Structure probing data (DMS) for a 207-nucleotide construct.
Reactivities are given for positions 27 through 156.
The reactions ran in a buffer of 150 mM KOAc, 10 mM MgCl2 and 150 mM bicine (pH 8.5), at 24 C.
Reactivities are rounded to 0.1 and cut off at 0 and 3.
RNA sequence: GGGAACGACUCGAGUAGAGUCGAAAAAAGCCACAGCUCCUUGGGGAAGUGACCUGCUCUCCUUUGGGUGUAUGCAGGUGUGUGGGGGGCCCUGAGUGGCAAGUUGCUUAGCUAACAGGAGAUCCAUAGGCAGCCUGCAGGCUAGGAAGUGGCCUAGACAUCAGUAGUGUUUCGACACUACUGAUGUAAAAGAAACAACAACAACAAC
Reactivity to DMS in 0.01 (KOAc 150mM, MgCl2 10mM, bicine 150mM(pH8.5), 24C), signal-to-noise 2, nucleotides 027 to 156: a040a050g010c010c000a050c030a200g020c040u010c100c010u000u000g000g000g000g000a080a150g060u000g000a070c010c030u010g020c010u000c000u010c000c020u000u010u000g030g010g030u000g000u000a010u010g040c020a010g000g040u000g060u010g030u000g030g010g040g030g060g010c020c020c000u020g020a080g030u010g020g000c030a030a080g020u000u000g000c030u000u000a050g000c040u000a150a070c040a040g010g000a140g010a140u000c070c050a190u010a180g010g020c180a110g020c000c010u000g020c020a260g010g000c030u000a060g000g020a100a130g000u000g000g020c000c010u000a090g010